[RMDB]
RNA sequence: GGGAACGACUCGAGUAGAGUCGAAAAGGGAAACGACCCAUCUUGGUGCAGGCGAGCCAAGAAUGCGUUUUAACAACGUAUCCUUUCCACAUACUAUUUGCAUUGCACAGCGAUAGUAUGGAUGGGAUUUUUUUGGUUGAUUCGUCAACCAAAAAAAAAAAGAAACAACAACAACAAC
Reactivity to 2A3 in 0.01 (KOAc 150mM, MgCl2 10mM, bicine 150mM(pH8.5), 24C), signal-to-noise 6, nucleotides 027 to 126: g070g010g020a080a070a020c090g100a120c010c000c010a020u010c000u000u030g020g010u060g020c190a210g130g000c020g010a010g000c000c010a000a000g000a000a010u030g000c000g000u000u010u020u090a170a100c120a010a000c010g020u020a030u020c000c000u010u050u050c000c000a020c000a020u000a000c000u000a010u020u070u280g000c040a060u070u170g100c140a070c060a110g000c010g000a000u000a000g000u000a010u010g010g000a020u060g050g020g020a060
Reactivity to DMS in 0.01 (KOAc 150mM, MgCl2 10mM, bicine 150mM(pH8.5), 24C), signal-to-noise 6, nucleotides 027 to 126: g010g010g030a060a070a100c180g000a130c030c010c010a170u000c010u000u010g000g010u010g010c050a090g010g000c040g000a300g000c020c010a010a020g010a040a070u000g000c000g000u000u000u000u030a080a190c210a060a020c000g010u000a040u010c020c040u000u000u010c010c010a060c080a020u000a030c000u010a010u000u000u050g060c000a100u010u020g000c220a100c210a130g000c010g000a010u000a010g000u000a000u000g010g000a060u010g000g000g010a000